[RMDB]
RNA sequence: GGGAACGACUCGAGUAGAGUCGAAAAAGUUAAAUGAGUGUCGCCAACUAACAGCCCUUUGCAAUUAGAGAUAUAAGUAAGCUGUGAUAAUAGCCUUGGCUACUUCAAAUGGUUCGAGUCCAUUGUAUCUCAUUCUCCUUUAUUUAUUAUAUGUCAGCCGUAAGGAUGAGUUCGCUCAUCCUUACGGAAAAGAAACAACAACAACAAC
Reactivity to 2A3 in 0.01 (KOAc 150mM, MgCl2 10mM, bicine 150mM(pH8.5), 24C), signal-to-noise 2, nucleotides 027 to 156: a020g100u100u040a060a020a060u040g010a010g090u030g000u010c020g000c020c000a010a010c020u030a010a010c000a010g010c000c080c000u050u050u010g150c120a140a050u220u200a140g040a060g030a060u050a020u050a220a000g000u020a010a050g000c010u010g020u010g070a020u070a300a050u060a050g000c030c080u020u070g010g000c000u010a000c000u040u100c030a000a030a070u010g020g000u020u090c040g030a000g050u030c000c010a010u000u020g020u040a090u080c000u000c020a010u080u020c020u070c050c000u000u060u070a260u140u200u000a100u170u020a160u050a030u260g060u040c000a010g040
Reactivity to DMS in 0.01 (KOAc 150mM, MgCl2 10mM, bicine 150mM(pH8.5), 24C), signal-to-noise 1, nucleotides 027 to 156: a070g060u030u000a030a100a060u000g020a070g020u010g010u000c170g000c030c050a090a100c070u010a060a030c050a070g040c010c000c020u000u000u010g000c100a080a130u000u000a210g010a070g040a090u000a110u000a090a030g010u000a060a100g010c050u000g020u000g030a120u010a090a150u010a020g000c040c110u000u010g010g000c030u000a060c020u000u000c060a090a040a040u000g020g030u000u000c080g000a300g000u000c000c000a070u000u000g000u000a070u020c000u010c020a110u000u000c010u000c010c030u000u020u000a080u010u010u010a110u030u000a150u000a130u040g010u000c040a100g020